This 177-nucleotide RNA was probed chemically with DMS and 2A3. For 2A3, 1,412 sequencing reads were counted. It was measured as part of the RMDB library OK2TRN. For DMS the reverse transcriptase was MarathonRT. The DMS profile rests on 1,733 reads. The reactions ran in a buffer of 150 mM KOAc, 10 mM MgCl2 and 150 mM bicine (pH 8.5), at 24 C.
RNA sequence: GGGAACGACUCGAGUAGAGUCGAAAAUUCGUGGUCUGCUGUCAAUCACAGGAUACUAAUUGCACACUGGGCGGUACACCGCUCACAGUAUUGACUUAAGUCGGUGGUACGUCUGUGUGGAGAUCGACCAUCCCUGGAGUUUCGACUCCAGGGAUGGAAAAGAAACAACAACAACAAC
Reactivity to DMS in 0.01 (KOAc 150mM, MgCl2 10mM, bicine 150mM(pH8.5), 24C), signal-to-noise 2, nucleotides 027 to 126: u010u000c040g020u010g000g010u010c020u000g020c030u000g000u010c080a140a110u020c130a080c060a020g010g010a120u000a060c070u010a060a120u010u000g010c040a010c010a040c030u010g080g000g000c010g000g030u020a160c070a040c010c010g030c020u000c020a010c230a050g040u000a120u000u010g000a090c010u000u010a030a050g010u030c010g030g020u010g010g000u010a030c030g000u010c000u020g060u000g040u000g000g020a120g020a140u000c040g000a150
Reactivity to 2A3 in 0.01 (KOAc 150mM, MgCl2 10mM, bicine 150mM(pH8.5), 24C), signal-to-noise 2, nucleotides 027 to 126: u060u050c050g030u050g020g040u050c020u060g110c060u050g030u110c090a080a110u140c010a050c010a050g010g040a030u050a130c040u110a060a070u100u170g030c000a010c020a000c050u150g040g020g000c000g020g020u130a000c030a000c020c010g000c000u020c040a030c000a000g000u010a240u220u300g180a030c010u000u050a060a000g050u180c040g020g040u060g040g000u160a000c000g000u000c030u010g000u000g000u020g010g000a090g000a020u110c050g050a030